[RMDB]
RNA sequence: GGGAACGACUCGAGUAGAGUCGAAAACUGCAGCCUGUGAUUCAGGAGUUUGAGAAGUUCUACACUGGGAAGCACAACGGGCGAAAACUGACAUGGCUUUUCAAUAUGUCACAGGGAGAUGUCAGGACGUUUUACGUCGUUUCGACGACGUAAAACGAAAAGAAACAACAACAACAAC
Reactivity to 2A3 in 0.01 (KOAc 150mM, MgCl2 10mM, bicine 150mM(pH8.5), 24C), signal-to-noise 2, nucleotides 027 to 126: c010u020g010c000a030g130c010c010u010g010u010g030a050u120u110c050a070g030g090a090g150u000u090u030g060a030g020a090a080g020u090u080c010u080a060c030a030c090u020g000g000g070a040a000g030c020a030c000a150a160c160g020g040g000c000g030a000a000a000a090c010u000g060a030c000a100u030g050g000c010u020u030u030u060c040a010a050u090a100u130g000u030c000a000c020a030g040g000g000a090g020a000u060g050u060c000a000g020g070a030
Reactivity to DMS in 0.01 (KOAc 150mM, MgCl2 10mM, bicine 150mM(pH8.5), 24C), signal-to-noise 2, nucleotides 027 to 126: c050u000g010c130a150g020c010c010u000g010u000g030a030u000u010c120a090g020g000a050g040u010u000u000g000a110g010a070a090g020u000u010c050u010a110c100a100c060u000g010g000g020a030a060g000c070a110c200a100a120c120g000g000g000c040g000a040a040a070a130c030u000g010a020c010a060u000g010g000c010u000u000u000u000c060a050a080u010a060u020g000u000c020a040c060a030g000g030g010a140g020a080u000g000u000c010a020g000g010a220